[RMDB]
RNA sequence: GGGAACGACUCGAGUAGAGUCGAAAAUUAGCGGAAGGAAGAACGACUUUAAUUAUCGCGCACAGACUCGCAACGAUUAAACAUGCCGAUCGAAUUAUCGUUGUAAAUGAAACAGGCAUCGCAGAAACGAUAGCCCGAUAUUCGUAUCGGGCUAUCGAAAAGAAACAACAACAACAAC
Reactivity to 2A3 in 0.01 (KOAc 150mM, MgCl2 10mM, bicine 150mM(pH8.5), 24C), signal-to-noise 1, nucleotides 027 to 126: u050u030a000g000c020g020g000a020a020g010g060a000a010g050a040a000c030g060a100c010u050u020u060a060a030u140u040a100u140c010g040c000g080c070a000c020a070g010a020c000u000c020g000c050a040a000c050g010a000u080u240a150a140a000c070a120u050g000c000c030g050a120u050c050g070a010a070u130u020a020u020c000g000u000u050g030u040a080a070a120u160g090a100a100a000c000a010g010g090c000a000u100c120g000c010a050g170a170a020a000
Reactivity to DMS in 0.01 (KOAc 150mM, MgCl2 10mM, bicine 150mM(pH8.5), 24C), signal-to-noise 2, nucleotides 027 to 126: u030u000a110g000c050g000g000a060a090g010g020a150a120g010a080a100c080g020a040c090u000u000u000a030a050u000u000a050u000c060g040c090g000c020a100c060a140g000a100c050u000c070g010c020a040a150c050g020a040u010u000a010a100a100c210a080u000g010c010c000g010a090u010c120g000a030a030u010u000a010u000c010g000u000u000g040u000a010a020a150u000g000a090a070a060c100a060g000g000c060a020u000c050g010c070a040g000a030a050a130
Chemical mapping of a 177-nucleotide RNA with 2A3 and DMS. For 2A3 the reverse transcriptase was SuperScript II with manganese. Reactivities are given for positions 27 through 126. Source: RMDB library OK2TST, as collected in RNAgym. The DMS profile rests on 962 reads. The reactions ran in a buffer of 150 mM KOAc, 10 mM MgCl2 and 150 mM bicine (pH 8.5), at 24 C. For DMS the reverse transcriptase was MarathonRT.